[RMDB]
RNA sequence: GGGAACGACUCGAGUAGAGUCGAAAAUUGGAUGGUGCAGAUAUUGGAGUUGGAGAGGAGAAUUUGGACGAACUUUUUGCAAAGUUGAAAGAGGAAUUGUUCAAAAACAACACACUGGAAGAGGUGAGGGGAUUAGUAAUUUCGAUUACUAAUCCCCAAAAGAAACAACAACAACAAC
Reactivity to DMS in 0.01 (KOAc 150mM, MgCl2 10mM, bicine 150mM(pH8.5), 24C), signal-to-noise 3, nucleotides 027 to 126: u000u010g020g000a070u000g000g000u000g000c030a070g010a110u000a080u010u000g000g000a100g000u010u000g010g010a090g000a110g020g010a080g010a130a150u000u000u000g000g000a040c060g030a060a080c020u000u000u000u000u000g010c110a050a080a090g020u000u010g010a030a060a050g000a070g000g000a080a150u000u000g000u000u000c040a040a030a060a080a090c120a050a060c120a070c090a050c090u000g000g020a090a040g000a050g010g000u000g000a150
Reactivity to 2A3 in 0.01 (KOAc 150mM, MgCl2 10mM, bicine 150mM(pH8.5), 24C), signal-to-noise 2, nucleotides 027 to 126: u110u070g080g030a000u040g040g020u060g020c070a030g070a120u100a100u110u120g030g000a050g020u080u050g070g000a070g000a040g070g070a060g020a040a030u080u090u060g020g010a000c000g020a000a080c060u100u010u020u080u140g060c050a200a100a080g030u170u130g030a030a040a000g050a020g040g030a100a130u040u030g010u020u010c000a000a000a000a010a020c010a010a050c020a020c010a010c100u070g000g030a040a050g010a020g100g000u040g010a050